This 170-nucleotide RNA was probed chemically with DMS and 2A3. For 2A3, 15,706 sequencing reads were counted. Values are in units of 0.01, from 0 to 300, in steps of 10. Values cover nucleotides 27 to 129. The reactions ran in a buffer of 150 mM KOAc, 10 mM MgCl2 and 150 mM bicine (pH 8.5), at 24 C. DMS adducts were read by reverse transcription with MarathonRT.
RNA sequence: GGGAACGACUCGAGUAGAGUCGAAAAGUUCAUUGGAGAAGUUCAUGUCUACUCCCAAUGCCAUCUUUAUUUCUGAUAGAAAAAUCAAGAAAUACCCUUGUAUGGUAGGUCCUGAUUAUGCUUACUUGAAGCGAGAAGUUCGCUUCUCGCAAAAGAAACAACAACAACAAC
Reactivity to DMS in 0.01 (KOAc 150mM, MgCl2 10mM, bicine 150mM(pH8.5), 24C), signal-to-noise 6, nucleotides 027 to 129: g000u000u000c000a030u040u030g000g010a100g030a110a050g040u010u010c220a040u080g000u060c050u000a110c060u020c010c000c000a040a020u030g040c160c170a070u040c030u010u010u000a090u030u010u020c020u030g000a060u000a080g080a030a070a060a090a010u030c040a010a020g000a000a000a000u000a070c090c020c030u000u020g000u030a060u010g020g040u020a030g000g010u040c060c020u030g050a060u000u060a070u070g020c080u010u010a080c010u000u000g020a110a080
Reactivity to 2A3 in 0.01 (KOAc 150mM, MgCl2 10mM, bicine 150mM(pH8.5), 24C), signal-to-noise 9, nucleotides 027 to 129: g020u040u070c010a000u010u000g050g030a170g060a200a040g030u090u130c060a070u240g140u050c030u030a050c010u020c010c000c000a000a010u010g040c050c040a090u020c040u020u040u030a020u000u000u000c000u000g020a010u000a080g300a130a120a010a020a010u060c090a140a020g010a000a010a000u030a040c010c000c000u060u100g150u130a090u110g040g030u030a020g020g040u030c000c020u000g030a060u040u100a100u220g080c060u040u070a070c010u040u060g070a100a010
It was measured as part of the RMDB library 15KLIB.
2A3 adducts were read by reverse transcription with SuperScript II with manganese.
As a SHAPE reagent, 2A3 marks flexible, mostly unpaired nucleotides at the ribose 2'-OH.